Chemical mapping of a 177-nucleotide RNA with DMS and 2A3.
For 2A3 the reverse transcriptase was SuperScript II with manganese.
DMS adducts were read by reverse transcription with MarathonRT.
Values cover nucleotides 27 to 126.
Conditions: 150 mM KOAc, 10 mM MgCl2 and 150 mM bicine (pH 8.5), 24 C.
RNA sequence: GGGAACGACUCGAGUAGAGUCGAAAAUAGUGUUGAAGGAGCAGUUGAACUUAAUAAUACAUUACCAUUCGAAUCUUGUAAGAAAGUCGCUCGUCGACCGAUCGCACUCAAACCAUUGACAAUCCUCCCGUUACGAGAGAUUCGUCUCUCGUAACGGAAAAGAAACAACAACAACAAC
Reactivity to DMS in 0.01 (KOAc 150mM, MgCl2 10mM, bicine 150mM(pH8.5), 24C), signal-to-noise 2, nucleotides 027 to 126: u000a100g020u000g010u000u000g020a070a120g010g030a100g030c000a070g010u020u000g020a170a100c020u000u000a010a060u010a100a100u000a070c060a060u020u010a070c150c060a100u070u000c100g020a130a100u000c060u000u000g010u000a050a080g010a050a020a090g010u000c030g010c010u010c170g030u000c000g010a110c060c030g000a090u000c060g010c090a020c060u000c140a060a050a120c050c030a000u000u000g000a050c220a060a060u000c040c040u010c170
Reactivity to 2A3 in 0.01 (KOAc 150mM, MgCl2 10mM, bicine 150mM(pH8.5), 24C), signal-to-noise 1, nucleotides 027 to 126: u050a020g000u000g010u070u140g000a020a050g040g030a010g000c030a030g050u090u120g020a020a000c000u100u040a090a000u190a220a020u030a070c010a030u040u100a120c070c000a050u020u030c050g000a020a030u040c050u060u050g050u060a040a060g030a160a100a010g040u000c000g010c000u040c100g140u090c030g020a020c000c030g000a120u010c000g000c030a000c030u010c000a030a020a060c030c000a090u020u130g080a040c050a000a060u090c000c020u050c050